[RMDB]
RNA sequence: GGGAACGACUCGAGUAGAGUCGAAAAGUUGAUGAUGUAUGCCGCUGAUCCAGCCAUGCACAUUGCCUCCUCUAACGCUUUUCUUGAUUUGAGGACAUCAUGUUUUAGUGUCGCUGCACUUACAACUCCAGGCUAACCUUCGGGUUAGCCAAAAGAAACAACAACAACAAC
Reactivity to DMS in 0.01 (KOAc 150mM, MgCl2 10mM, bicine 150mM(pH8.5), 24C), signal-to-noise 5, nucleotides 027 to 129: g020u010u070g020a000u120g020a150u020g040u020a060u050g070c040c110g040c070u090g010a120u040c160c040a110g030c070c040a090u010g080c090a060c040a060u010u030g010c100c040u000c030c070u070c050u020a050a060c100g000c080u050u030u060u010c100u030u040g080a110u020u020u030g020a080g010g000a060c110a060u020c090a060u040g020u040u040u080u020a070g020u040g010u010c090g030c040u030g000c000a000c010u030u060a100c000a030a000c020u030c030c060a150
Reactivity to 2A3 in 0.01 (KOAc 150mM, MgCl2 10mM, bicine 150mM(pH8.5), 24C), signal-to-noise 7, nucleotides 027 to 129: g020u020u050g010a040u010g010a030u000g050u020a040u130g040c020c030g000c030u010g040a180u120c130c030a020g040c030c020a020u020g020c050a020c040a110u040u100g030c020c010u010c000c010u000c040u050a060a030c060g060c130u040u090u150u050c030u050u120g160a290u100u020u090g050a010g030g020a020c000a030u110c000a000u100g100u030u020u010u120a080g000u040g050u080c040g030c070u040g000c000a010c010u030u080a010c030a010a000c000u010c020c020a010